Record summary
Structure probing data (2A3 and DMS) for a 177-nucleotide construct. The reactions ran in a buffer of 150 mM KOAc, 10 mM MgCl2 and 150 mM bicine (pH 8.5), at 24 C. Source: RMDB library OK1LIB, as collected in RNAgym.
[RMDB]
RNA sequence: GGGAACGACUCGAGUAGAGUCGAAAAAGUCGGUAUCGCUGGCGCGGACCCACAGCGGCGUUCCUGUCUCUCGUGGACCAGAAGCGCUCCCUCCUGAGCGUGUUUCGCGCCAACCAGUACCCGGACCAGUUCUGCAAGGUUUCGACCUUGCAGAACUAAAAGAAACAACAACAACAAC
Reactivity to 2A3 in 0.01 (KOAc 150mM, MgCl2 10mM, bicine 150mM(pH8.5), 24C), signal-to-noise 3, nucleotides 027 to 126: a000g130u110c040g020g000u010a010u120c050g010c020u010g000g000c010g000c010g000g000a020c010c060c000a020c010a030g030c030g020g000c010g040u110u110c030c090u210g010u000c010u000c000u010c130g040u080g020g040a070c030c090a050g040a110a020g020c010g000c000u050c020c020c010u130c000c080u090g010a010g020c050g010u060g030u040u080u120c000g000c000g000c000c000a000a010c020c000a010g030u000a000c000c040c000g020g020a030c000c010
Reactivity to DMS in 0.01 (KOAc 150mM, MgCl2 10mM, bicine 150mM(pH8.5), 24C), signal-to-noise 1, nucleotides 027 to 126: a010g060u040c100g000g000u010a000u060c190g050c160u000g000g000c050g020c020g010g000a010c190c000c010a040c030a000g010c290g070g000c000g010u010u030c090c040u030g100u000c040u010c000u000c170g010u020g000g000a030c180c080a170g000a150a000g010c030g000c020u000c100c170c030u000c120c040u000g000a000g090c050g040u040g020u000u000u000c090g000c000g000c010c000a000a000c000c070a000g090u010a000c000c010c090g000g000a130c020c040